Source information
Conditions: 150 mM KOAc, 10 mM MgCl2 and 150 mM bicine (pH 8.5), 24 C. Structure probing data (DMS) for a 177-nucleotide construct. DMS (dimethyl sulfate) methylates the pairing face of unpaired adenines and cytosines.

[RMDB]
RNA sequence: GGGAACGACUCGAGUAGAGUCGAAAAGAUAUGGAGAAUGUAAUCACUUAGAGCUCUUUUGACGCUUGGAGGUCGGAAACGACCUCCCAAGCGAUAAGAGCCUAAGUGAUUACAUUCUCCUAAGUCACUUUUAGAACAUGUUCGCAUGUUCUAAAAGAAAAGAAACAACAACAACAAC
Reactivity to DMS in 0.01 (KOAc 150mM, MgCl2 10mM, bicine 150mM(pH8.5), 24C), signal-to-noise 3, nucleotides 027 to 126: g010a050u000a300u010g000g000a030g010a050a010u000g010u010a000a000u000c000a010c000u000u000a010g000a290g020c000u010c010u000u000u020u000g020a300c110g010c010u000u000g000g000a030g010g020u010c000g020g000a090a090a220c010g010a000c010c000u000c140c040c070a000a000g010c000g010a060u000a020a000g000a010g030c020c000u000a000a010g010u000g000a000u000u000a000c000a000u000u000c000u000c000c000u000a000a070g000u000c030a210